[RMDB]
RNA sequence: GGGAACGACUCGAGUAGAGUCGAAAACCGUAUCGGUUCGCCGAUACGGAAAAGUUAAUGCUGCUAACACACAUCUUAAGCAUGGCGGUGGUAACGCUGGUGGGACUCCCCAGUUCGCUGGGGAGAACAGUAUGUUCGGGUUCGCCCGAACAUACUGAAAAGAAACAACAACAACAAC
Reactivity to 2A3 in 0.01 (KOAc 150mM, MgCl2 10mM, bicine 150mM(pH8.5), 24C), signal-to-noise 2, nucleotides 027 to 126: c000c000g000u000a000u000c000g010g040u050u050c110g050c050c000g000a000u000a000c010g010g020a050a080a000a020g090u080u110a100a070u130g030c020u010g060c020u080a110a010c040a000c010a010c010a200u060c050u140u170a100a000g080c020a040u060g010g000c050g000g010u070g000g020u040a060a000c020g000c040u010g020g040u080g000g050g030a030c000u000c000c000c000c000a010g010u040u030c130g020c050u000g020g050g000g020a000g020a010a000
Reactivity to DMS in 0.01 (KOAc 150mM, MgCl2 10mM, bicine 150mM(pH8.5), 24C), signal-to-noise 3, nucleotides 027 to 126: c000c000g020u010a000u000c010g010g000u000u000c230g030c010c000g000a010u000a000c000g000g000a010a000a060a120g010u010u010a050a090u000g000c030u000g020c060u000a060a080c080a060c080a110c100a070u000c070u010u010a080a090g010c080a030u020g010g020c060g000g020u020g020g010u000a060a050c040g010c030u010g000g010u000g010g010g000a290c000u000c000c020c010c030a010g010u000u010c170g000c000u000g010g000g010g000a000g020a020a030